The record gives the reactivity of an RNA of 207 nucleotides to DMS and 2A3. Conditions: 150 mM KOAc, 10 mM MgCl2 and 150 mM bicine (pH 8.5), 24 C. 2A3 adducts were read by reverse transcription with SuperScript II with manganese. For 2A3, 1,199 sequencing reads were counted. High 2A3 reactivity points to a flexible backbone, as in loops and unpaired stretches. For DMS, 3,444 sequencing reads were counted.
RNA sequence: GGGAACGACUCGAGUAGAGUCGAAAACCUCACUACAUUUUACUGUUCCUAAAGAAUUUGUGACAGGUACAGUAAAACGUAUUGCAAGGUUUAUCAGUUCCUAUAAACAGGUAAGUAACAAUAUAUGAAAAGCAAAGACUGUUCGCAGUCUUUGCAAUAUACCCACUACGUUCGCGUAGUGGGUAUAAAAAGAAACAACAACAACAAC
Reactivity to DMS in 0.01 (KOAc 150mM, MgCl2 10mM, bicine 150mM(pH8.5), 24C), signal-to-noise 2, nucleotides 027 to 156: c000c000u000c020a030c030u010a020c000a030u000u000u000u000a000c010u000g020u000u000c000c020u000a150a150a200g020a190a230u000u010u010g020u010g020a200c200a050g000g000u000a030c000a010g020u010a000a010a010a000c030g020u000a010u000u010g020c000a120a020g030g040u000u000u000a110u010c140a130g000u000u000c010c000u000a170u000a090a100a100c080a070g000g010u000a090a100g000u010a120a120c050a080a090u000a100u000a100u020g010a110a060a080a140g000c000a000a020a010g000a030c010u010g000u000u000c210g100c000a020g070u000c000u010u000u000g010c000a010a020
Reactivity to 2A3 in 0.01 (KOAc 150mM, MgCl2 10mM, bicine 150mM(pH8.5), 24C), signal-to-noise 3, nucleotides 027 to 156: c000c000u040c010a010c000u000a010c010a010u000u000u000u000a000c000u000g000u060u080c020c000u070a110a140a080g090a300a270u240u300u300g180u100g060a100c130a060g000g000u010a000c000a000g010u000a000a000a000a000c000g000u010a000u020u020g030c060a050a040g050g010u010u020u060a170u140c050a050g000u020u010c020c010u070a110u150a060a110a010c120a030g090g080u150a120a040g080u080a130a010c030a210a030u100a040u050a070u290g130a100a180a000a000g000c000a000a000a000g000a020c000u000g020u020u060c160g000c120a000g040u000c000u000u020u000g030c000a010a010
In probing experiments dimethyl sulfate is read out at A N1 and C N3, which are open when not base-paired.